RNA sequence: GGGAACGACUCGAGUAGAGUCGAAAAAAAGUUUUGUGUUGUAAUGUAUAGUGUUGGAGAAAGUGAAAGACUUGCGGAAGUAAUUGCCGACAAGUGCCCAAGGGAAGAGCCAGCAUGUUAAGUUACCUCCCAUGCUUGAAUUCGUUCAAGCAUGGGAAAAAGAAACAACAACAACAAC
Reactivity to DMS in 0.01 (KOAc 150mM, MgCl2 10mM, bicine 150mM(pH8.5), 24C), signal-to-noise 1, nucleotides 027 to 126: a100a000a070g040u000u000u020u030g030u000g010u000u010g000u020a160a010u000g000u000a030u010a220g000u020g070u000u000g000g000a190g020a010a170a100g050u030g000a020a030a050g000a010c060u000u000g000c070g020g000a030a030g030u020a010a090u030u040g040c020c000g000a020c000a010a010g000u000g000c010c000c010a110a090g030g010g010a040a020g040a190g000c040c050a020g020c080a000u000g020u000u000a020a090g000u000u000a030c090c040
Structure probing data (DMS) for a 177-nucleotide construct. Reactivities are given for positions 27 through 126. The reactions ran in a buffer of 150 mM KOAc, 10 mM MgCl2 and 150 mM bicine (pH 8.5), at 24 C. For DMS the reverse transcriptase was MarathonRT.